[RMDB]
RNA sequence: GGGAACGACUCGAGUAGAGUCGAAAAACAUCGGAUUCGCUGUGAUGGGACACGUGAUUGGCGGUGGAGCCCAGGAGUCGGGCCUUCGAACUGCCCAGGCUGCCGCCACCGAUGAUCAGCAGCGUGACGUGAUGAGGCUAUUCGUAGCCUCAUCACGAAAAGAAACAACAACAACAAC
Reactivity to DMS in 0.01 (KOAc 150mM, MgCl2 10mM, bicine 150mM(pH8.5), 24C), signal-to-noise 2, nucleotides 027 to 126: a080c090a080u010c100g050g000a280u000u000c010g010c020u000g010u000g000a160u000g000g000g000a210c180a030c040g010u010g010a130u000u000g000g000c000g000g000u000g000g000a120g010c020c020c010a090g000g000a080g000u000c030g000g000g030c210c200u000u000c100g010a070a060c070u010g030c050c000c030a100g000g000c010u000g010c010c010g000c000c010a020c020c000g000a050u010g000a280u000c010a090g000c010a010g000c020g030u000g010a220
Reactivity to 2A3 in 0.01 (KOAc 150mM, MgCl2 10mM, bicine 150mM(pH8.5), 24C), signal-to-noise 2, nucleotides 027 to 126: a020c040a090u150c040g080g040a130u160u080c010g000c020u040g030u070g190a240u120g060g060g040a030c020a010c060g040u070g030a200u140u090g020g000c020g000g040u050g080g200a020g010c020c020c000a000g030g000a030g020u030c050g030g090g110c030c000u120u070c010g010a130a060c050u080g030c010c010c020a010g000g000c000u030g010c010c000g000c000c000a000c010c000g030a080u040g000a070u050c030a030g000c010a000g000c020g040u050g020a020